RNA sequence: GGGAACGACUCGAGUAGAGUCGAAAACAUUAAUUCUAGGACCACAGGUAGACAACAGCUCUAAAAACGUGCUUAGAAAUCAUCUAACUCAUGCCGGUAAUUUUAAAGGAUGGAAAGCUGAGACCCACAAGGUUAUGUGACAUAUGCAAAUUCCGCACAUCCAUAUCACAUUCGUGUGAUAUGGAUGAAAAGAAACAACAACAACAAC
Reactivity to 2A3 in 0.01 (KOAc 150mM, MgCl2 10mM, bicine 150mM(pH8.5), 24C), signal-to-noise 4, nucleotides 027 to 156: c020a030u130u190a110a100u160u010c040u050a010g020g030a080c060c040a010c040a070g060g050u060a030g030a040c030a170a010c010a110g010c020u030c020u100a080a060a010a040a020c060g010u030g010c000u020u030a040g030a010a050a020u070c020a020u000c020u020a010a060c020u000c070a020u090g010c030c010g070g010u090a090a110u040u060u050u190a080a130a020g040g000a020u050g020g000a070a030a010g020c020u040g030a040g020a100c020c010c000a020c040a060a040g050g000u090u040a030u080g030u020g030a040c030a120u140a070u140g020c000a020a050a120u110u080c040c040g040c040a030
Reactivity to DMS in 0.01 (KOAc 150mM, MgCl2 10mM, bicine 150mM(pH8.5), 24C), signal-to-noise 2, nucleotides 027 to 156: c020a130u010u000a050a130u010u010c020u000a140g020g010a110c010c020a080c060a060g000g040u000a080g010a090c050a100a170c040a070g010c040u010c050u000a040a090a080a060a070c070g030u010g020c020u000u000a110g030a110a050a100u000c030a050u000c040u010a060a090c040u000c040a080u020g030c000c010g020g000u010a020a050u000u000u000u000a040a070a100g000g010a060u010g000g000a050a040a070g010c020u000g010a100g020a070c020c010c030a040c080a040a080g010g000u010u010a040u000g020u000g000a070c060a060u000a050u030g030c020a060a040a230u000u000c010c020g030c150a300